[RMDB]
RNA sequence: GGGAACGACUCGAGUAGAGUCGAAAAGUUUAAUUCAACAGCUUUCGCAAACAUGCUGUUGUAUUUAGUAUACAUAGAACUAGAUUUAGGCAAAUACCAGUUGACGCCAUAGGGAGCAUUAUUGCGUAGGUAAUAAGUAAUGAUGCCGCAUUUAUUACCCCUCUUUCUACUUCGGUAGAAAGAGGGGAAAAGAAACAACAACAACAAC
Reactivity to 2A3 in 0.01 (KOAc 150mM, MgCl2 10mM, bicine 150mM(pH8.5), 24C), signal-to-noise 1, nucleotides 027 to 156: g010u040u100u210a010a010u010u000c000a020a010c000a000g090c030u140u220u300c150g070c200a120a290a140c070a040u220g000c000u000g000u000u010g000u000a000u000u000u000a000g000u000a000u040a140c100a030u210a080g060a000a010c040u000a030g010a120u150u200u270a060g010g040c010a000a000a240u070a170c000c000a050g040u060u050g140a070c100g000c000c000a030u060a010g250g000g050a150g120c030a000u030u000a010u000u100g020c000g040u030a060g090g000u100a170a100u080a270a090g010u030a000a000u000g000a000u030g000c000c000g020c000a000u060u200u110a130u040u220a070